Source: RMDB library OK1LIB, as collected in RNAgym.
An RNA of 177 nucleotides, treated with 2A3 and DMS and read out base by base.
For DMS the reverse transcriptase was MarathonRT.
2A3 adducts were read by reverse transcription with SuperScript II with manganese.

RNA sequence: GGGAACGACUCGAGUAGAGUCGAAAAACGGGCUCAAACGAUUUAUUCGAUAGAACAGAACUGUGACAAAGAGUGAAACCACCCAAAACUCCCUUUACCACAGAGCUCGCACGUAGCGGAGGUAGAACCAGGGGUAGUUGUUCGCAACUACCCCUGGAAAAGAAACAACAACAACAAC
Reactivity to 2A3 in 0.01 (KOAc 150mM, MgCl2 10mM, bicine 150mM(pH8.5), 24C), signal-to-noise 2, nucleotides 027 to 126: a010c070g000g000g030c030u010c060a120a180a070c060g070a080u090u130u000a150u300u050c050g040a080u060a160g040a020a000c080a100g040a070a060c030u100g020u070g070a040c030a040a120a000g150a020g010u070g040a100a000a030c040c000a120c020c020c010a070a010a000a000c030u030c000c010c000u060u110u000a030c000c000a050c030a040g010a000g050c000u000c000g060c000a030c150g030u030a000g000c030g090g030a050g010g110u040a070g000a050a000
Reactivity to DMS in 0.01 (KOAc 150mM, MgCl2 10mM, bicine 150mM(pH8.5), 24C), signal-to-noise 1, nucleotides 027 to 126: a150c010g030g030g000c000u030c010a160a160a100c050g000a100u020u020u000a020u010u000c000g000a170u050a060g000a130a130c130a050g000a030a060c080u020g020u030g010a080c120a050a150a020g010a080g050u000g000a060a090a120c100c010a020c100c020c020a070a130a170a080c130u000c000c010c000u050u050u000a100c000c060a070c060a060g000a040g020c030u000c000g040c000a060c080g000u000a060g020c080g030g000a020g000g000u000a010g030a090a070